The record gives the reactivity of an RNA of 207 nucleotides to DMS and 2A3. Conditions: 150 mM KOAc, 10 mM MgCl2 and 150 mM bicine (pH 8.5), 24 C.
[RMDB]
RNA sequence: GGGAACGACUCGAGUAGAGUCGAAAAUCGAUCUCCUCUUUCGAUGGUUCAUUUCCGGGAUUGUAAGAAUAGCUGAUGCCGAUGUCCGACUCUUCGAGGCGACAAUCCUCAAGGAGAAAAGGAAGAACCAAAGGCAACAACUGACUCUCGAAAUGGAAUCUCACACUAAGUUCGCUUAGUGUGAGAUAAAAGAAACAACAACAACAAC
Reactivity to DMS in 0.01 (KOAc 150mM, MgCl2 10mM, bicine 150mM(pH8.5), 24C), signal-to-noise 2, nucleotides 027 to 156: u010c030g040a090u000c020u000c040c050u000c070u010u000u000c030g000a050u000g020g020u000u000c070a200u000u020u000c040c020g030g010g010a070u000u010g010u010a060a110g000a090a110u000a040g010c010u000g000a160u000g010c010c010g000a210u000g000u000c020c020g030a120c010u000c010u000u000c060g010a020g040g030c070g030a190c090a110a150u000c000c000u000c000a040a050g000g000a080g020a050a080a080a180g000g040a060a070g040a120a170c200c050a020a030a180g030g010c040a050a100c010a010a050c010u000g000a090c020u000c010u000c020g000a060a070a150u010g030g000a090
Reactivity to 2A3 in 0.01 (KOAc 150mM, MgCl2 10mM, bicine 150mM(pH8.5), 24C), signal-to-noise 5, nucleotides 027 to 156: u110c030g020a030u030c040u010c040c000u060c050u030u100u060c050g080a070u120g100g040u030u040c030a040u040u020u020c170c040g000g040g000a040u080u130g090u160a120a100g090a180a150u140a130g010c040u030g030a080u060g030c000c010g030a030u050g060u030c020c010g060a040c020u000c000u020u030c030g020a000g010g000c040g060a080c110a050a120u100c000c000u020c010a020a050g030g010a020g000a020a160a010a030g040g000a050a090g030a100a040c070c000a040a000a010g010g000c010a050a040c020a050a010c050u050g010a030c010u000c000u030c040g010a020a020a020u050g010g010a060
For DMS, 3,060 sequencing reads were counted. The 2A3 profile rests on 3,372 reads.